[RMDB]
RNA sequence: GGGAACGACUCGAGUAGAGUCGAAAAGAAUGAAGAUUCGUCUUCAUUCAAAUAAAAAUAGCUAGAAAACGAUCAAAACUAGCAUAAUACAUAACGAUCGAAAAACACAGCGUUUCGACGCUGUGAAGUUAACUGUGUGAUUCGUCACACAGUUAACAAAAGAAACAACAACAACAAC
Reactivity to DMS in 0.01 (KOAc 150mM, MgCl2 10mM, bicine 150mM(pH8.5), 24C), signal-to-noise 2, nucleotides 027 to 126: g010a010a000u000g010a010a000g000a050u000u000c220g000u020c010u000u000c000a000u000u010c000a090a140a060u020a020a060a130a090a080u000a200g000c000u000a010g010a070a020a090a060c030g040a000u000c010a180a070a140a090c010u000a010g000c000a080u010a070a090u030a050c180a090u010a080a150c280g020a020u000c000g040a050a080a000a080a190c000a010c010a000g010c000g000u000u000u010c180g030a020c000g000c000u010g000u000g000a000a090
Reactivity to 2A3 in 0.01 (KOAc 150mM, MgCl2 10mM, bicine 150mM(pH8.5), 24C), signal-to-noise 4, nucleotides 027 to 126: g000a000a010u000g000a000a010g010a010u030u090c130g050u010c040u000u000c000a000u000u000c000a010a030a000u080a000a020a010a010a020u100a050g010c000u000a000g030a050a080a040a070c020g010a010u020c020a010a010a020a110c010u010a000g010c020a020u100a090a040u080a040c070a050u140a120a070c100g000a010u020c000g030a070a020a020a040a010c000a000c000a000g000c000g000u000u060u140c200g060a020c000g000c000u000g000u000g000a020a000